[RMDB]
RNA sequence: GGGAACGACUCGAGUAGAGUCGAAAACGCCAAGGGUGUAAAGAUCGCUCUUUUACUCGGCAUGAUACCACCGUUAUCGGGUCAACAGAGUAGUUGCAAAUGACAACAAUGCUCAGGGUUAUGCUCUAAAAGUUCGUACCCUUCGGGGUACGAACAACUAUGGCGAGUUGUUCGCAACUCGCCAUAGAAAAGAAACAACAACAACAAC
Reactivity to 2A3 in 0.01 (KOAc 150mM, MgCl2 10mM, bicine 150mM(pH8.5), 24C), signal-to-noise 2, nucleotides 027 to 156: c070g020c000c060a030a050g030g030g000u020g030u080a130a100a010g180a120u160c010g020c100u050c020u060u040u000u010a160c140u090c000g010g030c010a020u100g020a030u050a080c030c030a010c040c040g120u110u030a100u170c000g050g000g030u020c060a030a040c080a060g010a000g000u080a030g040u010u010g010c020a020a170a190u200g110a170c010a050a020c000a150a070u150g040c000u010c130a040g120g020g000u100u100a090u170g000c000u030c020u080a130a160a030a000g010u000u000c000g000u000a000c050c000c000u020u010c190g030g000g000g030u000a000c000g000a000a000c000a000a000
Chemical mapping of a 207-nucleotide RNA with 2A3. Values cover nucleotides 27 to 156. For 2A3, 584 sequencing reads were counted. The data come from the RNA Mapping Database (RMDB), library M2RFPK. The reactions ran in a buffer of 150 mM KOAc, 10 mM MgCl2 and 150 mM bicine (pH 8.5), at 24 C.